[RMDB]
An RNA of 177 nucleotides, treated with 2A3 and DMS and read out base by base.
RNA sequence: GGGAACGACUCGAGUAGAGUCGAAAAGCUCUAUCCUUCGGGAUAGAGCAAACGCUACGAUUGACGGUGUAGCCGGACCUGAGGUUCAGCAUAGUCGGGCUAAAAGUCACAUGUUCGCAUGUGACAAGGUAAGGAUUAGGUUCGCCUAAUCCUUACCAAAAGAAACAACAACAACAAC
Reactivity to 2A3 in 0.01 (KOAc 150mM, MgCl2 10mM, bicine 150mM(pH8.5), 24C), signal-to-noise 4, nucleotides 027 to 126: g000c010u010c000u010a000u010c020c000u020u070c250g090g000g000a000u000a000g000a010g010c000a000a010a000c020g000c020u140a040c030g100a120u050u130g090a050c040g040g020u080g020u090a020g010c020c010g040g030a050c000c040u110g120a100g060g080u050u060c030a010g000c000a030u020a070g040u050c030g000g040g010c020u050a080a020a020a100g000u000c010a010c000a000u020g040u060u080c220g010c080a000u000g000u010g010a010c000a020a020
Reactivity to DMS in 0.01 (KOAc 150mM, MgCl2 10mM, bicine 150mM(pH8.5), 24C), signal-to-noise 5, nucleotides 027 to 126: g000c010u000c000u000a000u000c000c000u000u010c220g020g010g000a010u000a000g000a010g010c010a000a020a090c110g010c020u000a040c040g000a090u000u010g020a060c040g000g010u000g020u000a040g010c010c030g000g000a060c030c040u010g010a130g020g020u000u000c030a060g040c110a090u010a070g000u000c010g000g000g020c110u010a040a080a100a080g010u000c000a010c000a010u000g000u000u010c190g000c010a010u000g010u000g000a000c010a030a030
For DMS the reverse transcriptase was MarathonRT.